[RMDB]
RNA sequence: GGGAACGACUCGAGUAGAGUCGAAAAGCUGCCUCUGACGUCCUUAAGGGUGGUAAAGCGGGUCUCCCCCGGAAACAGGGGCGCGCCUGGCGCUAGCACGGGUAUGCGUGGGGGUCGACCCUGGCCGCCAGUGACUAUCAUUCGUGAUAGUCACUGGAAAAGAAACAACAACAACAAC
Reactivity to 2A3 in 0.01 (KOAc 150mM, MgCl2 10mM, bicine 150mM(pH8.5), 24C), signal-to-noise 3, nucleotides 027 to 126: g020c010u030g040c010c000u020c020u050g030a040c060g070u050c000c010u100u130a070a080g090g000g010u040g040g020u090a150a060a030g080c080g000g050g020u020c020u080c000c000c000c010c020g070g090a130a120a020c000a030g020g000g050g010c000g000c020g040c000c000u020g040g000c040g000c110u090a080g020c090a070c140g020g010g030u050a090u230g010c040g000u080g030g000g000g000g000u070c080g010a010c000c000c000u000g060g030c010c020g020
Reactivity to DMS in 0.01 (KOAc 150mM, MgCl2 10mM, bicine 150mM(pH8.5), 24C), signal-to-noise 3, nucleotides 027 to 126: g010c020u000g010c010c000u000c040u010g000a160c100g000u010c040c040u000u010a120a160g020g000g020u000g010g030u000a040a110a130g030c100g010g000g010u000c020u000c020c000c000c030c010g030g000a060a120a130c070a070g000g020g000g000c020g030c040g020c010c010u000g000g010c040g010c140u010a100g010c030a110c050g000g010g010u000a070u000g030c000g020u000g000g010g000g010g020u010c170g000a050c000c000c000u010g010g020c010c060g020